[RMDB]
RNA sequence: GGGAACGACUCGAGUAGAGUCGAAAACAUGCAGAAAGAAAUCCUGUGUGAGCCUCUGGUAUGAGAAAUAAAAUCUGCCAGUUUUAUAACAUUCACUUUCUGCCUCUGAGGAAAGAUACAGGGAACAAAAAUCAAUUUGUACAGUCUUAAUAUUAAAGAUAUUUAUCGCAUUCGUGCGAUAAAUAUCAAAAGAAACAACAACAACAAC
Reactivity to 2A3 in 0.01 (KOAc 150mM, MgCl2 10mM, bicine 150mM(pH8.5), 24C), signal-to-noise 1, nucleotides 027 to 156: c060a040u070g000c000a000g000a020a010a010g010a100a050a080u110c020c010u020g000u010g000u020g030a040g090c060c020u000c050u070g010g010u150a090u300g010a000g020a040a140a050u220a160a180a020a020u020c000u000g050c000c000a000g000u000u000u000u180a030u000a020a010c090a040u000u170c010a000c020u000u060u020c000u010g000c010c010u050c020u000g040a080g050g070a160a100a100g040a010u040a040c000a000g090g040g000a020a020c050a040a050a010a070a000u140c000a030a040u140u040u050g010u090a060c010a000g060u040c060u050u190a110a140u250a200u300u300a060a050a300